RNA sequence: GGGAACGACUCGAGUAGAGUCGAAAACUCACUUUCGGGUGGGCGAAGCUGAGAACUUAAGCGCCAGUAAACGGCGGUGGUAACUAUAACCAUCCUAAGGUAGCGAAAUUCCUUGUCGGGUAAGUUCCUCUAUCAUCGAGUUCGCUCGAUGAUAGAGAAAAGAAACAACAACAACAAC
Reactivity to 2A3 in 0.01 (KOAc 150mM, MgCl2 10mM, bicine 150mM(pH8.5), 24C), signal-to-noise 2, nucleotides 027 to 126: c000u000c010a020c000u070u080u080c150g080g010g030u000g030g000g000c020g050a040a010g000c060u070g060a010g010a120a050c000u020u050a140a010g040c000g000c030c000a110g030u300a060a190a030c060g060g000c020g000g070u010g000g000u020a060a060c060u050a080u100a300a010c000c010a000u040c000c000u030a020a020g020g030u000a020g060c010g060a070a040a110u080u080c020c000u020u040g090u060c050g000g000g030u030a160a000g030u000u030c000
Reactivity to DMS in 0.01 (KOAc 150mM, MgCl2 10mM, bicine 150mM(pH8.5), 24C), signal-to-noise 2, nucleotides 027 to 126: c020u000c020a050c060u000u000u000c120g020g020g030u000g000g000g010c030g010a070a110g010c060u000g020a090g000a040a050c060u000u000a050a130g010c050g010c010c000a080g010u010a040a090a110c140g020g020c070g020g020u000g000g010u010a070a110c170u000a170u000a090a050c050c000a010u000c050c020u010a060a060g000g000u000a030g020c030g000a090a060a180u000u010c020c010u010u010g000u000c050g030g010g000u010a050a100g000u000u000c000